[RMDB]
RNA sequence: GGGAACGACUCGAGUAGAGUCGAAAAGAUAUGGAACUGAAGUUAGCUCGAGGUGUACGCUCCCUGAGUGUCGGAAACGACACCAGGCCCGUACACUCCCCACCGAGCUAACUUCAGUUCCUAAGUCCUUGCCAUAUUGGUUCGCCAAUAUGGCAAGAAAAGAAACAACAACAACAAC
Reactivity to DMS in 0.01 (KOAc 150mM, MgCl2 10mM, bicine 150mM(pH8.5), 24C), signal-to-noise 2, nucleotides 027 to 126: g000a060u000a300u000g000g020a010a030c000u000g000a010a020g010u000u000a020g010c000u000c000g020a090g030g000u010g010u000a000c010g000c110u000c140c020c000u030g020a140g040u000g000u010c010g010g000a070a120a240c020g000a020c000a000c000c000a000g020g020c300c300c000g000u000a000c000a000c030u000c070c050c010c040a300c130c000g000a030g000c030u000a000a000c000u000u000c000a010g000u000u000c000c000u000a010a080g000u000c070
Structure probing data (DMS) for a 177-nucleotide construct. Reactivities are rounded to 0.1 and cut off at 0 and 3. The RNA was probed in 150 mM KOAc, 10 mM MgCl2 and 150 mM bicine (pH 8.5) at 24 C.